Chemical mapping of a 177-nucleotide RNA with 2A3 and DMS. The reactions ran in a buffer of 150 mM KOAc, 10 mM MgCl2 and 150 mM bicine (pH 8.5), at 24 C. The data come from the RNA Mapping Database (RMDB), library OK2TST.
[RMDB]
RNA sequence: GGGAACGACUCGAGUAGAGUCGAAAAGAUCACUUGGACAUUAAGCUAACCGACUGGCAGGAACACUGGCUUGACAGGAUGGCAAAUCGUAUGGUUGACUAGAGUCUAUGGGUGGGGCCUGACCGGAAAACUUUAGGUGUUUCGACACCUAAAGUUUAAAAGAAACAACAACAACAAC
Reactivity to 2A3 in 0.01 (KOAc 150mM, MgCl2 10mM, bicine 150mM(pH8.5), 24C), signal-to-noise 2, nucleotides 027 to 126: g040a080u090c040a000c100u070u090g050g060a050c010a110u140u120a110a070g030c030u030a030a040c030c060g060a050c030u030g020g000c060a040g020g040a060a010c030a020c110u090g120g010c000u040u040g010a020c020a040g070g060a090u060g000g000c000a000a030a090u050c010g010u120a060u200g080g000u050u060g020a020c040u040a020g010a010g150u050c030u120a110u240g090g000g000u030g000g000g020g020c040c050u030g020a030c010c030g070g050a000
Reactivity to DMS in 0.01 (KOAc 150mM, MgCl2 10mM, bicine 150mM(pH8.5), 24C), signal-to-noise 3, nucleotides 027 to 126: g010a090u010c060a030c060u000u010g010g030a090c080a080u010u000a080a130g000c080u020a090a180c050c020g020a170c070u000g000g000c020a030g000g020a080a050c100a070c110u010g000g000c010u000u010g000a090c060a050g010g000a080u010g020g000c110a040a050a080u010c110g020u000a060u010g010g000u000u000g010a060c030u010a110g000a100g010u000c020u000a080u000g000g000g010u000g010g010g010g000c050c020u000g000a080c040c030g000g000a080